[RMDB]
This 177-nucleotide RNA was probed chemically with 2A3 and DMS. DMS (dimethyl sulfate) methylates the pairing face of unpaired adenines and cytosines. Source: RMDB library M2PK50, as collected in RNAgym.
RNA sequence: GGGAACGACUCGAGUAGAGUCGAAAACAUGUACCCUUCGGGGUACAUGAACAUAACGCGGGCGUGGGACAGCGCCGGAGCUAGCCUCAGAUAGUCCCAGUAUUAGGUGCGCCUUCGGGCGCACCAACAUUACUCCAAUGUUCGCAUUGGAGUAAUGAAAAGAAACAACAACAACAAC
Reactivity to 2A3 in 0.01 (KOAc 150mM, MgCl2 10mM, bicine 150mM(pH8.5), 24C), signal-to-noise 6, nucleotides 027 to 126: c000a000u000g000u010a000c000c010c000u020u030c230g040g020g010g000u010a000c000a000u000g000a000a000c010a080u230a120a050c070g040c090g170g020g000c040g040u090g010g040g040a020c020a060g040c070g020c030c030g040g000a010g000c050u110a030g020c010c020u020c010a020g020a170u100a050g030u010c010c000c000a010g070u060a200u170u200a040g000g000u010g010c000g010c010c020u040u070c260g060g020g000c000g000c000a000c000c000a000a000
Reactivity to DMS in 0.01 (KOAc 150mM, MgCl2 10mM, bicine 150mM(pH8.5), 24C), signal-to-noise 6, nucleotides 027 to 126: c010a010u000g010u000a000c000c000c000u000u020c200g030g020g010g000u000a000c000a000u000g000a100a080c120a110u010a080a120c110g010c070g010g000g010c040g010u010g020g010g010a050c070a140g010c040g020c020c020g010g000a070g010c030u000a090g000c090c010u000c060a090g010a120u010a110g010u000c000c000c010a170g010u010a100u000u010a090g010g020u000g020c000g020c010c010u010u000c190g020g010g010c010g010c000a000c000c000a020a040